[RMDB]
RNA sequence: GGGAACGACUCGAGUAGAGUCGAAAAAGAAAUAGCGAUAAUCGUAAGAGAAAUGUCCUUCACAUAGCGCUACGCACAGAACUAUUAGUAGCGCAAUAGCUAUUGAACGACAUUACCUGCCAAAAAACCGAGUAAUGUACUUCGGUACAUUACUCGGAAAAGAAACAACAACAACAAC
Reactivity to 2A3 in 0.01 (KOAc 150mM, MgCl2 10mM, bicine 150mM(pH8.5), 24C), signal-to-noise 1, nucleotides 027 to 126: a030g110a000a060a020u160a040g010c000g020a020u110a080a090u140c050g070u080a040a000g050a000g020a060a000a080u010g000u000c000c000u000u000c020a060c000a080u080a020g020c030g020c000u000a000c000g050c000a090c060a150g260a300a060c050u100a150u300u160a030g000u000a000g000c010g040c000a000a010u060a020g000c000u020a010u040u020g020a050a000c010g000a000c010a040u000u010a000c000c010u040g050c030c070a000a120a030a030a030a100
Reactivity to DMS in 0.01 (KOAc 150mM, MgCl2 10mM, bicine 150mM(pH8.5), 24C), signal-to-noise 1, nucleotides 027 to 126: a050g030a130a080a130u000a110g010c060g010a130u010a120a110u010c100g040u010a020a160g000a070g000a070a020a050u000g040u000c000c050u040u000c030a000c260a050u000a000g010c040g010c000u000a030c010g020c120a020c180a040g020a050a040c180u000a090u000u000a240g000u000a050g040c020g010c020a010a020u020a160g000c110u000a000u000u000g000a000a040c240g000a000c000a000u000u000a050c040c010u000g020c030c010a020a100a060a060a120a080
This 177-nucleotide RNA was probed chemically with 2A3 and DMS. The 2A3 profile rests on 1,181 reads. The DMS profile rests on 657 reads.